RNA sequence: GGGAACGACUCGAGUAGAGUCGAAAAGAUAUGGAGAGGCGAAGGGCCCGUCAUUCGGAAACGAAUGACGGCUGUUGACGCCUCCUCCUAAGUCAAACGGGUGAAACGGUUCGCCGUUUCACCCGAACUAUGAAGGAUAGUUCGCUAUCCUUCAUAGAAAAGAAACAACAACAACAAC
Reactivity to DMS in 0.01 (KOAc 150mM, MgCl2 10mM, bicine 150mM(pH8.5), 24C), signal-to-noise 6, nucleotides 027 to 126: g010a020u000a150u010g000g000a030g010a050g000g010c000g010a190a130g030g010g020c170c010c020g010u000c000a000u000u000c000g010g000a050a030a080c000g010a020a000u000g000a010c000g000g010c050u000g010u010u000g010a290c010g000c000c000u000c120c020u000c000c000u000a020a100g000u000c010a070a110a230c030g000g010g020u000g000a000a000a000c000g010g000u000u020c250g020c000c000g000u000u000u000c000a000c000c000c000g010a000a030
Reactivity to 2A3 in 0.01 (KOAc 150mM, MgCl2 10mM, bicine 150mM(pH8.5), 24C), signal-to-noise 3, nucleotides 027 to 126: g000a000u030a010u090g010g010a010g000a000g010g010c020g060a130a100g210g170g130c060c060c000g000u010c000a010u010u000c000g010g000a030a030a020c010g000a000a010u010g010a000c010g000g010c010u020g020u070u050g030a020c000g000c000c000u000c000c010u000c000c000u010a040a000g030u010c010a020a100a140c030g000g000g000u010g000a010a010a000c000g000g070u070u120c260g030c050c000g000u000u000u000c000a000c010c000c000g000a000a000